[RMDB]
RNA sequence: GGGAACGACUCGAGUAGAGUCGAAAAUAGAAUGAGGACACAAAAUGGAAAGAAUCAGGCCUUGGGGGAUUGCAUAAGCCUCUCGGAUGAGAAAGGGGCUACUCGAAGACUGCUCUGUGAUUCUGCCCACUUUGCCUCCAUCCAGUGCCAGGUCACCGCUCCUUAAGAGAUUCGUCUCUUAAGGAGCAAAAGAAACAACAACAACAAC
Reactivity to 2A3 in 0.01 (KOAc 150mM, MgCl2 10mM, bicine 150mM(pH8.5), 24C), signal-to-noise 1, nucleotides 027 to 156: u160a000g110a050a080u050g000a010g040g000a000c020a000c000a200a010a080a000u070g020g000a140a070a030g010a020a070u110c020a010g030g020c040c000u050u040g040g010g010g000g050a090u090u230g060c040a100u070a210a060g030c050c000u030c000u000c030g150g140a180u240g050a020g080a030a040a060g000g000g000g020c010u010a000c000u000c040g080a000a000g020a040c110u030g000c000u000c020u120g110u050g020a020u050u030c010u060g000c000c020c000a030c010u060u120u020g010c000c030u000c050c010a010u070c020c020a000g000u060g110c030c040a020g050g000u240c050a050c160c060
This 207-nucleotide RNA was probed chemically with 2A3.
2A3 adducts were read by reverse transcription with SuperScript II with manganese.
The 2A3 profile rests on 611 reads.
Conditions: 150 mM KOAc, 10 mM MgCl2 and 150 mM bicine (pH 8.5), 24 C.
Source: RMDB library OK3TST, as collected in RNAgym.